RNA sequence: GGGAACGACUCGAGUAGAGUCGAAAAAUGUCAAUACCUUACACUCACACCGUUAAGAUGCGACAUGACCGUCCUUUAAAAACGAUAGUGAAUAUAUAUGAAGGAUCAAAUCUCUUCAUGCCUGAAAAGAUAACAUUUCUUUCGAGAAAUGUUAUCUAAAAGAAACAACAACAACAAC
Reactivity to 2A3 in 0.01 (KOAc 150mM, MgCl2 10mM, bicine 150mM(pH8.5), 24C), signal-to-noise 6, nucleotides 027 to 126: a000u080g060u100c020a040a030u090a240c010c000u040u070a040c050a020c060u050c020a060c000a010c040c020g010u030u040a040a020g030a050u050g060c100g020a010c020a040u080g060a040c020c060g060u040c000c010u100u110u080a120a150a040a010a000c030g030a050u070a120g040u050g040a080a020u100a000u030a000u010a020u220g010a010a000g020g010a010u080c100a060a200a140u030c140u010c000u050u020c010a010u030g040c000c020u070g080a110a060a020
Reactivity to DMS in 0.01 (KOAc 150mM, MgCl2 10mM, bicine 150mM(pH8.5), 24C), signal-to-noise 6, nucleotides 027 to 126: a040u000g010u000c090a100a180u010a130c060c020u010u010a050c140a100c080u000c050a070c080a100c130c040g010u000u000a060a190g010a030u000g000c230g010a030c020a020u000g010a100c220c080g010u000c020c010u000u000u000a030a050a060a050a070c060g020a060u020a050g000u000g010a040a040u010a080u000a080u010a050u010g000a020a020g000g010a050u010c180a050a040a300u000c040u000c010u000u000c010a010u000g010c080c060u000g000a040a060a120

Background: The record gives the reactivity of an RNA of 177 nucleotides to 2A3 and DMS. The RNA was probed in 150 mM KOAc, 10 mM MgCl2 and 150 mM bicine (pH 8.5) at 24 C. In probing experiments dimethyl sulfate is read out at A N1 and C N3, which are open when not base-paired. The 2A3 profile rests on 6,393 reads. For DMS, 5,830 sequencing reads were counted.